An RNA of 177 nucleotides, treated with DMS and 2A3 and read out base by base. Conditions: 150 mM KOAc, 10 mM MgCl2 and 150 mM bicine (pH 8.5), 24 C.

RNA sequence: GGGAACGACUCGAGUAGAGUCGAAAAACAUGUGUGCUGAUGCUGCGUACCGAUACUAGUGAUCCACAUGGAUCGAUCGAUCGUACGUACGUACCAUGGUACACAUCUCGAUCUCGAUCCAUGCUCGCAAGAACAACUCUUUCGAGAGUUGUUCUUGAAAAGAAACAACAACAACAAC
Reactivity to DMS in 0.01 (KOAc 150mM, MgCl2 10mM, bicine 150mM(pH8.5), 24C), signal-to-noise 9, nucleotides 027 to 126: a080c170a050u010g010u000g010u000g010c010u000g010a050u000g020c130u000g000c010g000u000a030c080c050g010a080u000a060c090u010a110g010u010g000a040u000c010c080a230c200a090u010g010g010a000u000c010g010a060u010c210g000a030u000c050g010u010a050c180g010u000a020c130g020u000a020c170c030a060u010g020g010u000a000c010a030c030a040u010c070u000c030g000a050u000c040u000c010g000a020u000c010c020a040u000g010c090u000c120g000
Reactivity to 2A3 in 0.01 (KOAc 150mM, MgCl2 10mM, bicine 150mM(pH8.5), 24C), signal-to-noise 9, nucleotides 027 to 126: a000c070a030u040g020u010g010u010g030c020u150g060a060u030g010c030u010g000c010g010u010a020c020c070g040a040u060a160c040u060a080g100u030g170a020u020c000c010a130c060a300u300g000g000a010u000c010g030a080u110c060g010a010u020c020g010u080a070c060g000u010a020c020g000u010a020c020c010a060u120g050g010u020a000c000a000c000a020u010c020u010c030g060a100u030c010u000c030g020a020u010c000c020a040u110g030c030u030c070g060

Overview: It was measured as part of the RMDB library OK2TRN.